[RMDB]
RNA sequence: GGGAACGACUCGAGUAGAGUCGAAAAGAACAUACCGCCAUUAUGCCAGACGGUUAAGAUUUCUGAGUCAUCAAGAUAGGCUUUUAAAUCUGCGGGCAUUGUUUUAUCUUGCGUCACAUCCCACACCUUGACAGGAGCAUGAUUGUACGCAUACGCAGUCCCAAUUACGGUUCGCCGUAAUUGGGACAAAAGAAACAACAACAACAAC
Reactivity to 2A3 in 0.01 (KOAc 150mM, MgCl2 10mM, bicine 150mM(pH8.5), 24C), signal-to-noise 1, nucleotides 027 to 156: g020a020a000c020a060u030a020c010c000g100c030c020a170u080u070a080u140g030c030c000a070g080a240c020g080g000u070u040a110a140g000a040u030u040u000c020u030g070a040g040u000c000a230u050c060a150a000g140a290u280a010g030g000c000u000u040u040u000a010a000a000u030c030u060g090c020g000g030g000c110a050u030u060g030u020u000u010u010a170u150c080u050u070g000c020g000u010c010a020c000a030u060c000c010c030a030c040a030c000c070u070u040g090a070c040a160g000g030a000g080c030a040u170g000a070u090u060g020u090a070c000g040c030a000u090a040c120g040c050a030